This 207-nucleotide RNA was probed chemically with 2A3 and DMS. Values cover nucleotides 27 to 156. For 2A3, 1,355 sequencing reads were counted. The DMS profile rests on 1,267 reads. The reactions ran in a buffer of 150 mM KOAc, 10 mM MgCl2 and 150 mM bicine (pH 8.5), at 24 C.
RNA sequence: GGGAACGACUCGAGUAGAGUCGAAAAUCAAAGCUAGCAUUGAAGACAUGCGGACAGAAUCCAUCAAACUGGCCGAGGAGAACGCCAAAAGUGAGUAGAUCUUAAUGGAUUAACGCAUAGCUACUGACGGGGAUUCCAGGGCAUGAAGGGAUGACCCACUACCUAAUGCCUUCGGGCAUUAGGUAGUAAAAGAAACAACAACAACAAC
Reactivity to 2A3 in 0.01 (KOAc 150mM, MgCl2 10mM, bicine 150mM(pH8.5), 24C), signal-to-noise 2, nucleotides 027 to 156: u070c040a050a030a030g070c020u060a010g020c000a090u060u120g110a060a000g040a040c040a020u040g010c050g000g030a030c010a060g140a030a000u010c010c010a000u050c090a080a060a140c080u030g050g000c000c020g060a090g050g040a100g010a050a070c040g000c000c010a070a120a000a000g060u050g100a010g020u080a020g050a130u060c020u080u140a010a050u060g060g050a050u050u060a080a030c030g000c040a030u010a040g040c000u040a040c010u000g130a050c050g000g020g010g020a040u090u000c040c030a040g050g030g000c050a080u100g030a040a100g070g010g020a020u040g070a040c000c000c010
Reactivity to DMS in 0.01 (KOAc 150mM, MgCl2 10mM, bicine 150mM(pH8.5), 24C), signal-to-noise 1, nucleotides 027 to 156: u000c040a130a140a080g010c010u000a030g000c090a140u000u050g000a060a090g000a100c070a070u010g000c060g120g070a190c050a140g030a030a300u020c040c010a070u010c040a080a070a180c090u040g020g030c010c070g000a060g000g020a140g010a030a130c250g050c000c010a050a040a070a100g020u010g010a030g020u000a110g020a140u000c080u000u000a000a050u000g000g010a010u010u000a030a080c070g000c020a050u000a180g000c070u000a060c000u000g020a070c060g000g000g010g000a210u010u000c010c080a100g000g030g030c030a010u030g020a060a070g000g000g040a070u010g000a260c000c000c000